[RMDB]
RNA sequence: GGGAACGACUCGAGUAGAGUCGAAAAGAUAUGGAAGGCGACGAUCUACGAUGACGACGAUCUCGCAACAACGCUCGGAAACGAGCGUUGUUGCGAGGGAGUCACAGUAGGGAGCCUUCCUAAGUCAGUUAUAAGUUCUGUUCGCAGAACUUAUAACAAAAGAAACAACAACAACAAC
Reactivity to DMS in 0.01 (KOAc 150mM, MgCl2 10mM, bicine 150mM(pH8.5), 24C), signal-to-noise 2, nucleotides 027 to 126: g020a100u010a300u010g000g010a000a000g020g030c000g030a100c300g010a020u030c000u000a010c020g000a300u000g010a140c300g020a070c070g010a300u010c030u010c000g000c000a000a040c000a000a000c000g000c020u000c000g020g000a110a050a190c000g020a050g070c000g060u020u000g000u010u010g010c010g030a010g000g000g000a300g010u000c030a010c030a300g020u000a000g000g000g010a050g000c010c000u000u000c000c000u000a000a050g000u000c040a100
Reactivity to 2A3 in 0.01 (KOAc 150mM, MgCl2 10mM, bicine 150mM(pH8.5), 24C), signal-to-noise 1, nucleotides 027 to 126: g040a030u100a050u180g010g040a000a020g040g020c010g050a300c030g000a230u000c000u020a000c010g290a260u190g160a150c120g000a000c010g000a000u030c000u010c000g150c070a050a000c020a000a000c030g040c000u040c040g150g080a150a140a100c000g060a000g040c030g060u010u010g000u000u000g070c100g020a010g000g000g010a000g000u000c020a000c010a000g000u000a000g000g030g020a000g030c000c000u000u000c000c000u000a040a050g050u000c060a030